Structure probing data (2A3 and DMS) for a 177-nucleotide construct. The data come from the RNA Mapping Database (RMDB), library OK1LIB.
[RMDB]
RNA sequence: GGGAACGACUCGAGUAGAGUCGAAAAGGCUAGUUUGCUAUCGUAGUCUUUUGGCUACGCUCUUUUGAGCGGUACAGGAUCACCUCCAACUGUACCGAUAGCACGGAGGUGAAUUUUUAUAGCCGAAGGGUGGCUGCUACUUCGGUAGCAGUUACCCAAAAGAAACAACAACAACAAC
Reactivity to 2A3 in 0.01 (KOAc 150mM, MgCl2 10mM, bicine 150mM(pH8.5), 24C), signal-to-noise 9, nucleotides 027 to 126: g020g000c040u040a030g110u080u130u100g000c000u000a000u010c010g010u000a000g010u010c020u050u230u110u300g000g000c000u000a000c000g010c000u000c000u030u260u080u280g000a000g000c000g000g000u010a010c010a040g060g030a080u090c040a030c050c010u030c020c010a100a080c090u080g000u020a000c000c000g000a000u010a000g010c010a000c020g050g010a040g030g040u090g040a070a080u030u050u030u090u170a140u060a040g000c010c010g020a100a060
Reactivity to DMS in 0.01 (KOAc 150mM, MgCl2 10mM, bicine 150mM(pH8.5), 24C), signal-to-noise 7, nucleotides 027 to 126: g000g000c000u000a020g010u010u010u010g010c010u000a010u000c000g010u010a000g010u000c000u020u020u020u040g010g000c000u000a010c000g010c010u000c000u010u020u010u040g000a000g010c010g020g010u000a010c020a060g000g000a140u010c060a090c040c010u000c010c020a140a150c140u030g010u000a010c010c010g000a000u000a010g000c010a060c230g010g000a050g000g000u010g010a060a040u010u030u030u030u030a100u000a050g000c000c010g000a120a120